[RMDB]
RNA sequence: GGGAACGACUCGAGUAGAGUCGAAAAUGCCCCAAUUAGUGGCACUAGUUGGCAGAGCUGUUCAUGAGCUGCCAGUUAUCAUUUUGGAGUCAGUUUGAAACCAGCCUCUUAACACACUGCUGUUAACCCAUGUAGAUUAAUUCGUUAAUCUACAUGGAAAAGAAACAACAACAACAAC
Reactivity to DMS in 0.01 (KOAc 150mM, MgCl2 10mM, bicine 150mM(pH8.5), 24C), signal-to-noise 9, nucleotides 027 to 126: u010g000c060c010c000c140a070a070u000u000a050g030u000g010g010c090a210c130u000a050g010u000u000g010g010c040a030g000a080g010c060u000g010u010u010c200a100u010g010a040g010c020u000g000c020c010a030g010u000u000a050u010c090a090u000u000u010u000g010g010a090g020u010c040a060g010u000u000u010g000a080a070a070c080c030a070g000c040c020u000c060u000u000a040a050c060a040c080a140c140u010g000c060u000g010u000u000a060a100c280
Reactivity to 2A3 in 0.01 (KOAc 150mM, MgCl2 10mM, bicine 150mM(pH8.5), 24C), signal-to-noise 9, nucleotides 027 to 126: u080g040c000c000c000c010a020a100u110u080a080g040u060g070g000c030a000c060u010a010g030u040u030g020g010c040a010g010a030g060c040u050g090u260u140c150a120u140g040a000g020c010u020g010c020c000a000g010u020u070a070u090c060a050u030u120u100u140g050g010a050g050u070c020a030g030u030u150u170g090a060a030a020c020c010a010g030c010c010u040c010u040u070a050a000c020a000c010a010c070u090g030c020u020g030u120u070a040a040c010